RNA sequence: GGGAACGACUCGAGUAGAGUCGAAAAGAUCGGAAACAGCAGCAGGUGAGUCCGCCUUAUGUGAAGGAUCGGCUGAAACACGAGGAAAUACUGAGCCCACGCAAGACGGUAGCCGAACAGUAGCAACAAAACGCUUACGUGUUCGCACGUAAGCGAACGACAACACAUACUUCGGUAUGUGUUGUCGAAAAGAAACAACAACAACAAC
Reactivity to DMS in 0.01 (KOAc 150mM, MgCl2 10mM, bicine 150mM(pH8.5), 24C), signal-to-noise 1, nucleotides 027 to 156: g000a080u020c030g000g000a110a050a120c040a150g100c020a100g000c030a090g030g050u000g010a160g050u000c040c050g000c040c020u000u000a120u030g000u000g010a170a090g030g040a030u000c000g000g040c030u020g000a060a040a100c030a140c040g000a110g000g010a140a040a070u000a100c000u000g000a230g000c010c020c040a030c100g020c030a080a060g000a050c030g000g000u010a070g000c000c080g040a030a070c050a040g010u000a040g030c040a000a140c060a090a090a050a020c000g010c000u000u010a010c020g100u000g000u000u000c260g010c000a020c030g000u000a000a030g010c140g010a000a060
Reactivity to 2A3 in 0.01 (KOAc 150mM, MgCl2 10mM, bicine 150mM(pH8.5), 24C), signal-to-noise 3, nucleotides 027 to 156: g050a060u090c090g020g030a100a050a030c030a050g080c020a010g000c010a010g010g050u040g020a040g070u030c020c010g030c030c000u110u070a130u130g090u110g110a040a050g050g000a120u100c020g030g000c050u080g040a150a040a000c080a020c050g020a030g020g040a020a050a060u140a050c030u040g010a020g000c020c030c000a010c050g040c040a080a020g020a040c030g020g010u060a020g020c000c010g020a010a000c020a010g040u110a010g040c020a020a010c020a060a070a050a000c020g000c000u010u000a000c000g000u010g020u040u030c100g000c040a000c000g010u000a000a000g000c020g000a010a010

This 207-nucleotide RNA was probed chemically with DMS and 2A3. DMS adducts were read by reverse transcription with MarathonRT. Conditions: 150 mM KOAc, 10 mM MgCl2 and 150 mM bicine (pH 8.5), 24 C. For 2A3, 1,794 sequencing reads were counted.